RNA sequence: GGGAACGACUCGAGUAGAGUCGAAAAGAUAUGGAUGCCCAUUUGAGUCAAGUCGGAAACGACUUAACAAUGAUGAUGUGCAUCCUAAGUCAAAACUUGAUUGGGGGCUUCGGCCCCCAAUCAAGAAGAUAAUGGUUCCGUUCGCGGAACCAUUAUCAAAAGAAACAACAACAACAAC
Reactivity to DMS in 0.01 (KOAc 150mM, MgCl2 10mM, bicine 150mM(pH8.5), 24C), signal-to-noise 1, nucleotides 027 to 126: g010a010u000a250u010g000g000a020u010g010c010c030c000a000u030u000u000g010a300g000u000c020a010a010g010u000c000g010g000a040a040a110c010g010a010c000u000u000a030a000c020a130a200u000g020a130u000g010a040u000g010u000g000c010a000u000c000c000u000a000a130g000u000c030a130a090a130a210c000u010u000g010a020u000u000g000g030g020g020g010c010u010u010c220g020g000c010c000c000c000c010a000a000u000c000a010a000g000a070a040